[RMDB]
RNA sequence: GGGAACGACUCGAGUAGAGUCGAAAACGGGAGUAACUAUGACUCUCUAAAUUGCAAAAUUUACCUUUGGAGGGAAAAGUUAUCAGGCCUGCACCUGAUAGCUAGUCUUUAAACCAAUAGAUUGCAUCGGUUUAAUAGGCAAGACCGUCAAAUUGCGCACUAUACUUUCCUUCGGGAAAGUAUAGUGAAAAGAAACAACAACAACAAC
Reactivity to DMS in 0.01 (KOAc 150mM, MgCl2 10mM, bicine 150mM(pH8.5), 24C), signal-to-noise 1, nucleotides 027 to 156: c070g000g010g000a050g030u000a040a190c080u000a120u000g000a070c000u000c060u020c000u000a010a010a060u000u000g020c170a090a140a090a050u010u000u010a010c020c040u010u000u000g010g000a060g000g000g000a080a060a090a070g020u000u000a020u000c010a010g030g020c000c020u010g020c100a050c020c010u000g010a040u000a000g000c000u000a060g030u010c000u000u000u030a010a020a050c010c020a030a040u000a050g000a180u000u000g000c150a150u010c030g030g000u000u000u010a020a030u000a010g020g040c010a120a140g000a100c000c000g000u000c030a020a110a080u000u000g020c000g000
Reactivity to 2A3 in 0.01 (KOAc 150mM, MgCl2 10mM, bicine 150mM(pH8.5), 24C), signal-to-noise 5, nucleotides 027 to 156: c050g000g000g000a020g010u070a150a070c120u100a200u300g100a040c000u000c000u000c000u050a030a100a100u130u090g000c020a060a050a120a160u080u120u150a160c040c000u080u040u080g050g010a060g040g020g030a050a110a000a030g010u020u000a000u000c000a000g010g010c050c150u110g030c030a040c010c000u000g000a000u000a000g010c000u000a000g000u000c000u000u000u030a020a030a010c020c000a050a060u070a140g140a190u090u270g050c050a030u070c020g000g020u000u010u040a100a090u090a030g030g000c010a010a050g070a050c010c020g060u060c010a010a050a120u080u080g000c040g010